[RMDB]
RNA sequence: GGGAACGACUCGAGUAGAGUCGAAAACGUCUUAAAUUAAAUUUCCCUUGCUGAGCUCAUCUCAGCAAACAAUAACAAAUAACAAAUAAGAACAGCACGGAAGGUUGUUCUUAUUUGUUACAAUUAAAUCUUAUUUACAGUUCGCUGUAAAUAAGAUAAAAGAAACAACAACAACAAC
Reactivity to 2A3 in 0.01 (KOAc 150mM, MgCl2 10mM, bicine 150mM(pH8.5), 24C), signal-to-noise 4, nucleotides 027 to 126: c030g040u040c080u170u210a130a160a200u120u140a090a120a140u070u140u020c000c000c020u000u030g000c000u000g010a010g010c080u060c180a150u130c120u000c000a010g000c010a010a000a010c010a020a030u280a060a030c040a080a110a030u070a020a010c000a010a010a010u010a000a000g000a010a000c000a000g030c080a030c250g190g070a070a060g100g010u000u000g000u010u010c000u000u000a000u010u000u000g000u010u000a000c000a000a010u060u080a030a120
Reactivity to DMS in 0.01 (KOAc 150mM, MgCl2 10mM, bicine 150mM(pH8.5), 24C), signal-to-noise 2, nucleotides 027 to 126: c250g020u010c150u000u000a080a080a170u010u010a060a100a150u000u000u000c000c000c010u020u000g020c000u020g000a010g030c280u020c300a070u010c000u000c000a000g020c000a000a020a050c130a100a060u000a040a060c110a080a110a140u000a000a000c000a000a020a000u000a000a000g000a010a010c000a000g010c010a050c100g020g030a110a120g020g000u000u010g000u010u000c010u000u000a000u000u000u000g000u000u000a010c050a070a100u000u000a050a120